RNA sequence: GGGAACGACUCGAGUAGAGUCGAAAACACUUUUGGACAUGCCAAUAUUGACCGCCUUCGGGGCCAUCGGCACAUCAUAUGUUGUCUUCUGUACAUCAAAUGCCCUGCACAUCAAAUGCCAAAAGGCCUUUUGACCCGUAUUCGUACGGGUCAAAAGAAAAGAAACAACAACAACAAC
Reactivity to 2A3 in 0.01 (KOAc 150mM, MgCl2 10mM, bicine 150mM(pH8.5), 24C), signal-to-noise 3, nucleotides 027 to 126: c030a040c020u130u070u000u090g080g000a150c030a060u090g100c080c030a080a040u060a190u140u190g080a030c090c030g040c080c100u140u090c070g040g020g000g000c050c030a140u120c060g030g000c000a000c010a070u180c030a050u090a070u220g140u150u000g010u000c000u090u000c000u100g130u060a020c000a080u130c050a000a040a140u090g000c000c000c030u000g040c000a030c000a010u100c040a050a100a010u090g010c000c000a000a130a060a040g040g000c000
Reactivity to DMS in 0.01 (KOAc 150mM, MgCl2 10mM, bicine 150mM(pH8.5), 24C), signal-to-noise 1, nucleotides 027 to 126: c130a090c020u030u010u020u000g000g000a000c060a120u000g000c110c100a070a100u040a010u060u000g000a120c110c070g000c050c050u020u010c060g000g000g010g050c010c050a020u000c060g010g000c010a040c080a040u060c020a050u040a050u010g020u000u020g000u000c000u020u000c020u020g010u070a060c190a070u010c000a030a030a050u000g000c000c000c000u000g000c060a130c030a050u010c150a020a120a040u000g010c020c030a010a000a120a050g000g000c040

About this RNA
An RNA of 177 nucleotides, treated with 2A3 and DMS and read out base by base. As a SHAPE reagent, 2A3 marks flexible, mostly unpaired nucleotides at the ribose 2'-OH. For 2A3 the reverse transcriptase was SuperScript II with manganese.